[RMDB]
RNA sequence: GGGAACGACUCGAGUAGAGUCGAAAACUAUCCCGGGGUCAAGUAUGAUGAUUGGAGCCGAAUGGCCUAGAAAAUGCAUCCGUUCCGUCCUCGGAGAUGAUUGAGUAGCUGUCCCGGUCGGUGUCUCGUGUAAAUACGAGUUCGCUCGUAUUUACACAAAAGAAACAACAACAACAAC
Reactivity to 2A3 in 0.01 (KOAc 150mM, MgCl2 10mM, bicine 150mM(pH8.5), 24C), signal-to-noise 3, nucleotides 027 to 126: c030u020a040u030c010c000c000g010g000g010g020u060c050a060a080g060u080a160u160g040a010u030g020a040u020u110g080g040a040g010c030c010g180a190a210u300g030g000c000c000u030a050g140a100a150a020a020u200g030c010a010u000c030c040g020u050u000c040c030g000u020c010c010u010c000g030g000a180g000a040u050g020a020u040u140g020a030g060u100a020g000c040u040g020u040c000c000c030g010g000u060c020g040g020u070g060u040c020u040c070
Reactivity to DMS in 0.01 (KOAc 150mM, MgCl2 10mM, bicine 150mM(pH8.5), 24C), signal-to-noise 3, nucleotides 027 to 126: c090u010a090u000c010c000c020g050g020g000g020u010c050a090a130g010u010a090u020g000a040u010g010a110u000u000g010g000a110g040c020c030g010a150a110u020g010g010c020c080u000a070g000a090a080a060a070u000g000c020a040u000c030c090g020u000u000c070c100g010u000c030c020u000c020g000g010a110g000a050u010g000a100u010u000g020a120g010u000a100g000c040u000g000u010c010c020c000g010g000u010c050g020g000u000g010u000c030u000c070

An RNA of 177 nucleotides, treated with 2A3 and DMS and read out base by base. Source: RMDB library RFMREP, as collected in RNAgym. The reactions ran in a buffer of 150 mM KOAc, 10 mM MgCl2 and 150 mM bicine (pH 8.5), at 24 C. For 2A3 the reverse transcriptase was SuperScript II with manganese. For DMS, 3,472 sequencing reads were counted.